This 177-nucleotide RNA was probed chemically with 2A3 and DMS. The DMS profile rests on 8,297 reads. The RNA was probed in 150 mM KOAc, 10 mM MgCl2 and 150 mM bicine (pH 8.5) at 24 C. DMS adducts were read by reverse transcription with MarathonRT. It was measured as part of the RMDB library OK2TRN.
[RMDB]
RNA sequence: GGGAACGACUCGAGUAGAGUCGAAAACUUAUUCCAAGCCCCCAGUCAUUUUCCAAAACAAACAGGAGUUUGCUAAUUACCUGUGUCUGUAGAAUUUAGCAAGAACUAGUGGAUAGGUGUGCAGGACACUAGACUAUCGAUUCGUCGAUAGUCUAGUAAAAGAAACAACAACAACAAC
Reactivity to 2A3 in 0.01 (KOAc 150mM, MgCl2 10mM, bicine 150mM(pH8.5), 24C), signal-to-noise 2, nucleotides 027 to 126: c010u070u070a060u150u060c010c020a090a070g100c010c010c000c010c000a010g000u020c010a040u000u090u070u000c000c000a000a020a090a090c010a030a080a010c010a030g050g020a040g040u060u050u060g020c020u060a040a010u030u030a050c010c010u040g000u010g080u070c050u050g010u030a030g050a090a060u020u070u040a010g000c010a010a030g020a030a030c030u030a030g030u010g030g000a050u010a060g010g010u040g020u020g030c020a010g040g050a010c000
Reactivity to DMS in 0.01 (KOAc 150mM, MgCl2 10mM, bicine 150mM(pH8.5), 24C), signal-to-noise 6, nucleotides 027 to 126: c040u000u010a090u010u000c020c010a300a150g000c030c010c010c010c030a070g010u020c050a060u000u000u000u000c030c040a090a100a100a090c120a060a080a060c040a040g000g000a110g010u000u000u000g010c070u010a040a030u000u000a090c030c010u000g010u000g010u010c070u000g010u000a060g000a070a070u000u000u000a030g000c020a030a050g010a070a090c060u000a070g020u000g010g000a060u000a030g000g010u000g020u000g010c050a030g000g010a100c180